[RMDB]
The record gives the reactivity of an RNA of 177 nucleotides to 2A3 and DMS. 2A3 adducts were read by reverse transcription with SuperScript II with manganese. For DMS, 1,155 sequencing reads were counted. Source: RMDB library OK1LIB, as collected in RNAgym. DMS adducts were read by reverse transcription with MarathonRT.

RNA sequence: GGGAACGACUCGAGUAGAGUCGAAAACAGGAAAGGAAUGUUGACUCACGAAAGGCUUCUGCACACUUUUCCUCUCGGGGCCAGCGUUUCUGAAUACAUGCCUCAAACUUUGUCCAAUCAGUCAGCAAACCAGGAGGUUGUUCGCAACCUCCUGGUUAAAAGAAACAACAACAACAAC
Reactivity to 2A3 in 0.01 (KOAc 150mM, MgCl2 10mM, bicine 150mM(pH8.5), 24C), signal-to-noise 2, nucleotides 027 to 126: c000a000g150g040a100a070a000g040g020a020a100u060g000u010u000g000a010c000u000c010a170c200g090a100a130a000g030g020c020u060u030c150u200g000c030a090c020a080c190u040u050u200u010c000c010u020c020u020c020g000g000g020g000c030c000a000g000c000g040u000u000u040c020u040g000a020a030u020a030c000a050u050g000c000c000u040c040a070a050a110c120u060u090u140g010u000c010c010a000a020u000c000a060g230u040c000a010g000c010a050
Reactivity to DMS in 0.01 (KOAc 150mM, MgCl2 10mM, bicine 150mM(pH8.5), 24C), signal-to-noise 1, nucleotides 027 to 126: c070a180g020g000a140a160a050g000g010a030a020u000g000u010u000g000a090c000u000c020a180c000g000a030a000a060g000g020c300u000u010c020u020g010c020a000c100a100c120u020u000u070u000c020c000u060c030u030c010g000g000g000g000c060c000a020g000c000g000u000u000u030c020u000g000a090a120u040a130c120a020u000g010c030c000u000c040a050a110a110c050u060u000u000g060u000c010c060a000a070u060c120a160g000u050c000a060g000c040a170